[RMDB]
RNA sequence: GGGAACGACUCGAGUAGAGUCGAAAAGAGAUUCGGCACGGACAGCGUCGGCCCCGCCUCGACGAGCGACGUGCCCGACGCGAGCGCGAGAUCCGCGCCGUCGGCCGACAGCCGGCGCGAUACCGCAACUCGGAUUUACUUUCGAGUAAAUCCGAGUAAAAGAAACAACAACAACAAC
Reactivity to 2A3 in 0.01 (KOAc 150mM, MgCl2 10mM, bicine 150mM(pH8.5), 24C), signal-to-noise 2, nucleotides 027 to 126: g090a000g000a070u070u070c030g060g070c060a040c090g060g050a050c050a090g000c010g000u020c010g020g020c010c030c000c020g000c010c000u140c080g270a230c030g000a000g010c000g050a090c040g060u100g050c040c000c000g060a010c010g140c090g060a140g000c000g020c000g010a130g050a120u040c090c010g010c000g010c020c020g000u010c000g000g030c010c000g040a030c020a020g030c020c000g000g000c000g000c010g000a010u050a050c020c000g080c040a010
Reactivity to DMS in 0.01 (KOAc 150mM, MgCl2 10mM, bicine 150mM(pH8.5), 24C), signal-to-noise 3, nucleotides 027 to 126: g020a140g000a130u000u000c030g000g020c080a090c050g000g010a060c140a190g000c040g040u000c000g010g000c070c060c100c040g000c040c020u010c160g010a140c100g010a160g030c050g020a220c050g030u010g000c070c010c000g000a020c090g010c120g000a080g000c050g010c000g000a160g000a140u030c160c010g010c000g010c030c040g000u000c020g020g000c050c020g010a200c260a110g020c070c000g020g010c010g010c030g010a130u000a140c030c020g010c170a080
Chemical mapping of a 177-nucleotide RNA with 2A3 and DMS. For DMS the reverse transcriptase was MarathonRT. The DMS profile rests on 1,529 reads. Reactivities are given for positions 27 through 126.